[RMDB]
RNA sequence: GGGAACGACUCGAGUAGAGUCGAAAAGCUAAAUAAUAUAGCCAUAAAAACUCUAAACUUUGAUAUCUUCUUUUCAACUACUUUCAAUUUUUUUACUGAAGCUAUUAUCAAGUAAUAGUGUGAUCCAGGCGUUACUUAACUUCGGUUAAGUAACGCCAAAAGAAACAACAACAACAAC
Reactivity to 2A3 in 0.01 (KOAc 150mM, MgCl2 10mM, bicine 150mM(pH8.5), 24C), signal-to-noise 1, nucleotides 027 to 126: g000c000u020a000a000a080u030a090a090u060a190u060a300g030c000c000a040u110a040a000a000a050a050c060u080c000u000a170a180a000c040u290u150u080g020a110u080a170u100c100u000u060c000u010u040u020u130c070a180a150c080u040a100c020u040u270u090c100a220a150u010u230u210u000u110u110u210a000c000u080g000a000a000g040c020u000a080u040u000a000u230c040a000a000g000u000a020a020u020a190g020u000g100u020g040a000u000c000c000a000